Record summary:
An RNA of 177 nucleotides, treated with DMS and 2A3 and read out base by base. The reactions ran in a buffer of 150 mM KOAc, 10 mM MgCl2 and 150 mM bicine (pH 8.5), at 24 C.

RNA sequence: GGGAACGACUCGAGUAGAGUCGAAAACUUGUUGGCUUCCUCGAUAUCAUCCAGCUCUUCAAGGAUCUCCUCUGGUUCAUUCGUCGGCGCCGGAACUUCAUGUACCCAUGCGGAGAACAAACGCCAGUAAUGCCACCAUAUUCGUAUGGUGGCAUUAAAAAGAAACAACAACAACAAC
Reactivity to DMS in 0.01 (KOAc 150mM, MgCl2 10mM, bicine 150mM(pH8.5), 24C), signal-to-noise 4, nucleotides 027 to 126: c100u000u000g010u020u000g030g000c060u030u000c010c000u000c070g000a090u050a070u030c080a050u010c040c030a110g000c070u000c050u010u010c070a060a180g010g010a090u020c000u000c060c030u020c020u000g000g000u020u010c050a130u000u000c120g040u010c050g010g000c040g000c070c030g000g010a030a040c070u010u000c100a070u000g020u040a080c080c050c010a070u010g020c060g030g020a070g030a080a070c160a030a060a100c090g010c030c060a060g010
Reactivity to 2A3 in 0.01 (KOAc 150mM, MgCl2 10mM, bicine 150mM(pH8.5), 24C), signal-to-noise 4, nucleotides 027 to 126: c040u040u020g010u000u040g040g010c040u060u050c020c010u020c040g060a070u080a040u150c020a000u010c010c040a030g020c020u030c000u120u070c050a090a090g080g020a090u030c040u020c020c000u070c040u040g040g000u050u090c040a070u110u000c080g090u000c030g100g010c030g000c070c000g020g020a020a030c020u070u080c060a100u120g010u130a110c000c020c010a010u080g010c010g010g070a070g020a110a010c050a040a090a000c060g020c020c000a010g050
For DMS, 5,435 sequencing reads were counted. For DMS the reverse transcriptase was MarathonRT.